RNA sequence: GGGAACGACUCGAGUAGAGUCGAAAAGCUGGAGCCGUGAUGGGGAGGAGCUGCCGGUCAUCUGCCAGAGCAGCUCAGGCCACAUGCAUGCCCUGGUCCUUCCAGGGGUCACCCGAGAGGAUGCUGGAGCCCGAUAUACUUUCGAGUAUAUCGGGCUAAAAGAAACAACAACAACAAC
Reactivity to 2A3 in 0.01 (KOAc 150mM, MgCl2 10mM, bicine 150mM(pH8.5), 24C), signal-to-noise 1, nucleotides 027 to 126: g000c040u060g040g020a000g100c010c020g060u070g040a080u080g040g000g020g010a060g000g000a000g010c000u000g010c020c010g000g030u080c050a280u120c160u170g040c000c010a080g010a020g000c010a000g010c000u030c000a000g080g040c000c010a020c000a040u160g070c010a050u100g050c020c000c020u030g000g000u090c030c030u120u040c040c000a000g000g030g000g010u030c050a030c040c000c020g010a040g000a000g040g030a090u080g010c030u090g010g070
Reactivity to DMS in 0.01 (KOAc 150mM, MgCl2 10mM, bicine 150mM(pH8.5), 24C), signal-to-noise 3, nucleotides 027 to 126: g010c040u000g000g000a050g030c020c050g010u000g010a090u000g000g020g000g020a150g010g010a020g020c010u000g000c010c040g010g020u010c170a130u010c240u000g000c010c010a080g020a180g030c010a000g000c010u000c010a040g020g020c010c030a040c060a040u000g020c070a070u000g030c020c010c000u000g010g010u010c120c120u000u010c030c030a040g000g000g010g000u020c110a070c040c000c030g010a150g000a130g000g010a040u010g010c050u010g020g010